[RMDB]
RNA sequence: GGGAACGACUCGAGUAGAGUCGAAAAUACUAAUUCGUUAGUACCAUGCGGGGUCAAGGGAGGCACCGCCUUUGAUCUAUACUGAAGCCUCCACGGUAUAGGGAGGGGUGCCGAAGAACUUGACGGAGGCACCCAUUCGCUUGCCUUCGGGCAAGAACGCAUCGGUUUAUUUCGAUAAACCGAUGCGAAAAGAAACAACAACAACAAC
Reactivity to 2A3 in 0.01 (KOAc 150mM, MgCl2 10mM, bicine 150mM(pH8.5), 24C), signal-to-noise 1, nucleotides 027 to 156: u070a010c000u010a010a040u170u140c140g060u050u070a020g000u030a120c050c140a050u200g040c090g000g010g030g000u000c010a000a000g040g140g000a140g000g030c030a030c010c030g300c050c000u300u110u000g050a040u010c000u000a010u000a010c000u020g140a140a030g080c000c020u030c000c000a030c030g050g000u020a000u010a030g030g050g000a000g000g000g000g000u010g000c050c050g000a010a010g020a060a030c030u030u060g020a040c100g070g000a000g030g000c000a050c000c010c000a050u080u080c000g000c000u000u020g020c000c000u010u030c160g030g030g000c000a000a000g050a040a030